[RMDB]
RNA sequence: GGGAACGACUCGAGUAGAGUCGAAAAUUGUUAUACGAGACUGCUUUAUGGUCUUGCGAGACCCUCAAACUGCGGGAAAGUCUUAAAAACACGCUACACUAAGCUAUGUUUCGAAAGAUCAUAGUGGCCGGGGUAAUGACCUAGGGUAUAGUAAAAGCAUUGAUACAGAGUUCGCUCUGUAUCAAUGAAAAGAAACAACAACAACAAC
Reactivity to 2A3 in 0.01 (KOAc 150mM, MgCl2 10mM, bicine 150mM(pH8.5), 24C), signal-to-noise 3, nucleotides 027 to 156: u080u020g040u050u100a140u020a100c060g000a010g040a060c020u010g070c020u080u090u110a110u240g000g000u020c000u010u020g020c020g010a050g030a020c010c000c010u040c030a120a160a140c090u140g010c050g020g020g020a100a090a040g050u030c030u050u100a110a090a000a020a000c040a020c070g000c030u090a040c070a030c100u070a090a000g000c000u020a030u070g040u020u060u030c030g010a050a020a020g020a010u020c010a010u010a010g020u030g020g040c050c030g010g000g000g000u030a120a080u060g030a030c000c020u050a050g060g030g010u070a060u070a090g050u040a000a040a050a000g040
Reactivity to DMS in 0.01 (KOAc 150mM, MgCl2 10mM, bicine 150mM(pH8.5), 24C), signal-to-noise 2, nucleotides 027 to 156: u000u010g010u000u000a140u000a100c070g030a070g020a050c020u010g020c130u010u010u010a100u000g010g000u000c010u010u000g000c010g000a180g020a130c010c020c000u000c030a110a080a110c070u010g020c040g000g000g020a120a050a120g010u020c020u010u010a070a010a070a050a050c050a090c150g010c010u000a070c070a070c120u010a110a300g020c080u000a040u000g000u000u000u020c010g000a130a100a210g010a020u000c000a030u000a050g090u000g000g000c020c050g050g010g000g030u020a060a060u000g000a080c000c020u000a080g030g010g000u000a040u000a040g030u010a070a080a080a130g000